[RMDB]
The record gives the reactivity of an RNA of 177 nucleotides to 2A3 and DMS. 2A3 adducts were read by reverse transcription with SuperScript II with manganese. For 2A3, 5,808 sequencing reads were counted. Reactivities are given for positions 27 through 126.
RNA sequence: GGGAACGACUCGAGUAGAGUCGAAAAGAGGGCGAGGAAUCUGAGGGUGAGGGCCGUAGGCGGGGUAUCGAAGACCACGAGGUCGUAUGCCUGGUGUCGACUCACGAUCUCCUCGAUGGCCCAGAGCUACUAAGCUGAGUUUCGACUCAGCUUAGUAAAAAGAAACAACAACAACAAC
Reactivity to 2A3 in 0.01 (KOAc 150mM, MgCl2 10mM, bicine 150mM(pH8.5), 24C), signal-to-noise 4, nucleotides 027 to 126: g110a030g020g050g080c030g030a020g030g040a020a050u050c050u090g020a080g070g020g020u080g050a100g010g060g000c030c020g040u070a020g050g040c060g000g040g000g010u080a030u090c030g040a090a020g030a040c010c010a040c110g060a070g030g030u070c090g040u100a050u270g010c000c010u020g070g020u060g030u050c040g050a070c010u000c030a040c010g010a010u000c020u020c060c000u010c010g020a050u040g020g010c000c000c010a020g000a010g010c020
Reactivity to DMS in 0.01 (KOAc 150mM, MgCl2 10mM, bicine 150mM(pH8.5), 24C), signal-to-noise 5, nucleotides 027 to 126: g010a120g020g010g000c050g000a060g010g010a060a050u000c050u000g010a090g010g010g010u000g010a170g010g000g020c020c010g020u010a040g020g010c060g000g010g010g020u000a090u000c080g010a130a080g000a060c070c020a090c150g000a070g000g010u000c130g010u000a060u000g010c010c000u000g010g020u010g010u000c040g000a130c030u000c060a100c090g010a030u000c090u000c010c010u010c000g010a050u010g000g010c000c000c010a080g000a110g010c150